[RMDB]
RNA sequence: GGGAACGACUCGAGUAGAGUCGAAAAGAUAUGGACUCAGCUUUUGACGCUCCAAGGGUCGGAAACGACCUCAAUGAGCGAUAAGCUGGUCCUAAGUCAAACACCCAUAACUUCGGUUAUGGGUGAACACCUACUCUGCGUUCGCGCAGAGUAGGUGAAAAGAAACAACAACAACAAC
Reactivity to 2A3 in 0.01 (KOAc 150mM, MgCl2 10mM, bicine 150mM(pH8.5), 24C), signal-to-noise 2, nucleotides 027 to 126: g020a020u070a030u070g050g020a040c040u060c300a000g000c000u060u070u070u270g290a200c070g030c000u030c010c020a040a120g040g030g000u000c000g000g000a000a040a030c010g010a020c010c030u050c000a060a120u300g000a000g010c040g020a010u020a000a000g050c000u000g000g000u000c000c000u000a050a000g020u000c000a020a170a060c010a010c010c000c000a000u000a000a000c000u050u040c300g140g010u000u010a000u020g000g040g060u000g020a010a010
Reactivity to DMS in 0.01 (KOAc 150mM, MgCl2 10mM, bicine 150mM(pH8.5), 24C), signal-to-noise 1, nucleotides 027 to 126: g000a070u000a250u000g010g000a030c010u000c010a030g000c010u000u000u000u000g010a080c010g000c000u000c040c130a170a300g000g000g030u000c000g010g000a050a040a180c000g000a010c000c000u000c140a040a200u010g000a030g020c000g010a050u010a010a000g010c020u000g000g000u000c000c010u000a000a030g010u010c050a100a120a170c010a010c010c000c000a030u000a000a000c000u000u000c220g020g000u000u000a000u000g010g000g040u000g000a010a020